[RMDB]
RNA sequence: GGGAACGACUCGAGUAGAGUCGAAAAGUAAUCCAAUUCAUUGGUGAUACUACAUAACUUCGCUAAUUGAUCAUUUUGAUCAAUAUAUCAUUCAAGUUUCUGCCCUAUCAGCUUGAUGGUAGUGUAUGGAUAAUAUAUCGUUCGCGAUAUAUUAUCCAAAAGAAACAACAACAACAAC
Reactivity to DMS in 0.01 (KOAc 150mM, MgCl2 10mM, bicine 150mM(pH8.5), 24C), signal-to-noise 5, nucleotides 027 to 126: g010u000a070a200u010c010c010a040a080u000u010c210a110u000u000g010g000u000g000a210u000a030c010u000a070c130a070u010a130a080c100u000u000c080g030c080u010a060a030u000u010g000a000u020c000a210u010u000u010u010g010a000u000c000a000a010u000a080u010a040u000c040a040u010u010c060a040a050g000u000u000u000c130u000g010c050c020c010u000a070u000c100a050g010c130u010u000g000a050u000g010g000u000a030g020u010g010u010a130u000
Reactivity to 2A3 in 0.01 (KOAc 150mM, MgCl2 10mM, bicine 150mM(pH8.5), 24C), signal-to-noise 9, nucleotides 027 to 126: g020u020a020a040u000c010c000a010a040u180u140c120a150u100u040g000g010u030g040a050u050a190c020u030a030c030a160u190a110a110c050u130u110c070g010c130u080a100a040u020u000g010a000u000c030a070u070u240u200u300g010a000u000c000a020a000u080a010u010a000u050c050a050u160u150c060a080a030g000u030u050u000c040u070g010c000c010c010u030a060u080c020a010g100c050u100u210g060a030u030g070g010u000a020g020u030g020u050a090u080